Record summary: Chemical mapping of a 177-nucleotide RNA with 2A3. It was measured as part of the RMDB library OK1LIB.
RNA sequence: GGGAACGACUCGAGUAGAGUCGAAAAUAAAGCUCACAUGUUCGCGAUCCUUCGUGCCUCCUUCUAUUGUGGACAUCACCAGUAGGACGUGUGCUAGAAACAGGUCGUACAGGAGUGCCCAAGGGUAGUGGCUACGUAUGUUCGCAUACGUAGCCACAAAAGAAACAACAACAACAAC
Reactivity to 2A3 in 0.01 (KOAc 150mM, MgCl2 10mM, bicine 150mM(pH8.5), 24C), signal-to-noise 2, nucleotides 027 to 126: u090a010a100a000g000c000u030c000a210c000a100u160g070u100u130c090g000c010g050a050u110c010c010u040u200c050g040u000g030c020c000u000c000c000u060u180c040u000a110u090u110g030u250g020g050a040c000a040u060c000a100c000c000a000g000u050a040g040g030a010c080g160u000g070u090g000c100u040a000g140a000a060a030c040a010g010g050u010c000g060u080a000c040a040g000g050a000g020u060g000c000c000c000a000a010g140g000g020u060a110
The reactions ran in a buffer of 150 mM KOAc, 10 mM MgCl2 and 150 mM bicine (pH 8.5), at 24 C. 2A3 adducts were read by reverse transcription with SuperScript II with manganese. Reactivities are rounded to 0.1 and cut off at 0 and 3. Values cover nucleotides 27 to 126.